The record gives the reactivity of an RNA of 177 nucleotides to 2A3 and DMS. It was measured as part of the RMDB library OK1LIB. The RNA was probed in 150 mM KOAc, 10 mM MgCl2 and 150 mM bicine (pH 8.5) at 24 C. For 2A3 the reverse transcriptase was SuperScript II with manganese.
RNA sequence: GGGAACGACUCGAGUAGAGUCGAAAACUUUAGCCUCAAAGCCCAGUGUCAGACCACACUUUAAUGUGCCACUCUGCGGAGAGUGCAGUCUGCGAUAGUGCCCCAGGUGGACUGGGUUAACAAAGGCGUUCAUUCCUCGAUUCGUCGAGGAAUGAACAAAAGAAACAACAACAACAAC
Reactivity to 2A3 in 0.01 (KOAc 150mM, MgCl2 10mM, bicine 150mM(pH8.5), 24C), signal-to-noise 2, nucleotides 027 to 126: c000u130u090u090a060g110c030c000u150c150a020a100a110g020c000c000c000a000g010u030g000u000c020a000g000a010c000c000a010c000a010c020u170u120u180a250a110u120g000u010g000c000c000a000c000u000c000u010g000c010g000g000a000g010a000g000u000g010c000a000g000u020c010u010g000c000g000a000u000a010g080u100g000c020c000c000c000a010g010g000u160g050g070a020c000u000g020g020g000u000u000a000a000c010a020a000a000g280g000c090
Reactivity to DMS in 0.01 (KOAc 150mM, MgCl2 10mM, bicine 150mM(pH8.5), 24C), signal-to-noise 1, nucleotides 027 to 126: c020u040u030u000a120g000c040c010u000c080a110a020a070g000c000c000c000a240g010u030g000u000c000a000g000a000c010c000a020c000a030c290u010u040u130a120a090u010g020u000g000c080c000a000c000u030c010u010g000c010g040g030a180g000a020g000u000g040c030a040g000u010c030u000g010c050g060a110u040a000g000u020g000c000c000c010c020a000g000g060u000g000g030a070c070u000g000g000g000u000u050a010a180c120a000a030a000g000g010c090